[RMDB]
RNA sequence: GGGAACGACUCGAGUAGAGUCGAAAAGAUGAUGUUUAUCUCUGCGUUAAGUGCUCGGAAUCUUUUGAUUCAGUACAACAGUUCAAGGAUGAACAUGAAUGUGAGCUGUCAAUAGAGAGAGCGGAGCAUACAGGCUCGUUUUCGAACGAGCCUGUAUAAAAGAAACAACAACAACAAC
Reactivity to DMS in 0.01 (KOAc 150mM, MgCl2 10mM, bicine 150mM(pH8.5), 24C), signal-to-noise 3, nucleotides 027 to 126: g010a110u000g030a050u010g000u010u010u000a040u010c000u000c020u000g000c090g000u000u040a090a250g000u010g020c010u000c150g010g010a060a050u000c000u010u010u010u040g070a010u030u030c010a030g080u000a030c060a080a130c080a030g000u010u000c010a030a110g010g010a120u010g000a030a040c090a040u000g010a120a120u010g010u000g000a220g010c010u000g010u000c000a050a070u010a090g000a080g010a060g000a030g020c000g000g000a200g020c140
Reactivity to 2A3 in 0.01 (KOAc 150mM, MgCl2 10mM, bicine 150mM(pH8.5), 24C), signal-to-noise 4, nucleotides 027 to 126: g130a050u180g020a020u040g020u030u030u120a070u000c030u000c030u050g030c020g050u050u120a200a050g040u050g070c020u070c130g060g030a030a030u020c000u080u220u010u140g000a020u100u000c040a030g010u060a010c040a030a000c000a060g020u060u060c030a080a020g110g060a130u100g000a000a040c100a070u060g040a080a140u060g010u040g090a000g050c010u030g000u070c020a070a070u090a070g070a000g000a010g000a020g050c010g040g050a010g050c020
Source information: This 177-nucleotide RNA was probed chemically with DMS and 2A3. Reactivities are given for positions 27 through 126. It was measured as part of the RMDB library OK1LIB. For 2A3, 2,073 sequencing reads were counted. Conditions: 150 mM KOAc, 10 mM MgCl2 and 150 mM bicine (pH 8.5), 24 C.